[RMDB]
RNA sequence: GGGAACGACUCGAGUAGAGUCGAAAAAGACCAGGGUGCAAGUCCUGGGAGACUCCAACCAGUACAGGGUGAGUCCUGACAAGCUUGUCAGUGACAAGUGGUUUCAGACACAGAGGUCAAAAGUGAGCUACCAACAGUGGUUCGCCACUGUUGGUAGAAAAGAAACAACAACAACAAC
Reactivity to 2A3 in 0.01 (KOAc 150mM, MgCl2 10mM, bicine 150mM(pH8.5), 24C), signal-to-noise 4, nucleotides 027 to 126: a010g100a040c000c000a000g000g030g010u090g090c080a070a040g020u020c000c010u000g000g060g000a050g030a000c020u000c050c000a040a060c030c010a020g060u210a150c040a040g000g000g090u100g060a010g010u010c000c030u000g020a040c020a090a080g050c070u060u060g030u040c060a250g070u040g300a000c000a000a020g010u060g100g010u060u090u040c060a040g020a040c000a010c010a090g080a050g110g040u100c060a000a000a140a000g180u130g050a020g040
Reactivity to DMS in 0.01 (KOAc 150mM, MgCl2 10mM, bicine 150mM(pH8.5), 24C), signal-to-noise 3, nucleotides 027 to 126: a060g000a120c000c010a030g000g000g020u000g000c240a070a100g020u030c000c000u000g050g040g000a130g000a110c040u000c030c050a130a140c010c000a110g030u050a050c150a100g000g010g020u020g010a110g000u030c010c000u000g010a030c050a030a240g050c100u020u020g000u000c030a120g010u010g000a020c010a070a030g000u010g010g000u000u020u000c000a030g000a110c000a120c050a060g010a090g000g000u000c080a060a090a020a090g020u010g000a100g040